[RMDB]
RNA sequence: GGGAACGACUCGAGUAGAGUCGAAAACAAGAUUUGGGAUGAAUAUCUUGAUACGUUAUGGGAAAAUCUUGAAAACCUGUCCGUACACGAGACAAACGUUGAAUCCGGUAUAAUCACCAGUCAAGCGGCUUGACAGCUUGUUCGCAAGCUGUCAAGCAAAAGAAACAACAACAACAAC
Reactivity to DMS in 0.01 (KOAc 150mM, MgCl2 10mM, bicine 150mM(pH8.5), 24C), signal-to-noise 1, nucleotides 027 to 126: c080a070a060g000a070u030u000u000g000g010g000a110u000g000a090a110u000a030u000c000u000u000g000a130u120a080c020g030u010u000a130u010g010g010g010a130a080a080a090u000c080u000u070g000a130a090a090a180c000c010u050g000u000c020c060g000u020a090c240a170c050g000a080g000a010c080a180a020a020c030g000u000u000g000a100a080u030c040c210g000g000u020a020u000a130a040u000c050a070c000c010a030g010u040c080a130a120g000c280g000
Reactivity to 2A3 in 0.01 (KOAc 150mM, MgCl2 10mM, bicine 150mM(pH8.5), 24C), signal-to-noise 1, nucleotides 027 to 126: c030a090a010g000a050u040u080u230g040g030g000a030u020g000a200a030u060a020u090c020u060u070g050a020u000a030c000g000u010u110a100u210g040g000g030a040a160a080a110u140c120u140u160g110a080a120a030a000c000c000u000g030u000c030c000g040u140a080c150a010c170g050a050g040a060c000a010a020a020c010g020u030u030g110a090a000u030c050c000g020g020u050a070u050a090a000u020c030a030c070c000a010g030u000c030a090a000g080c000g060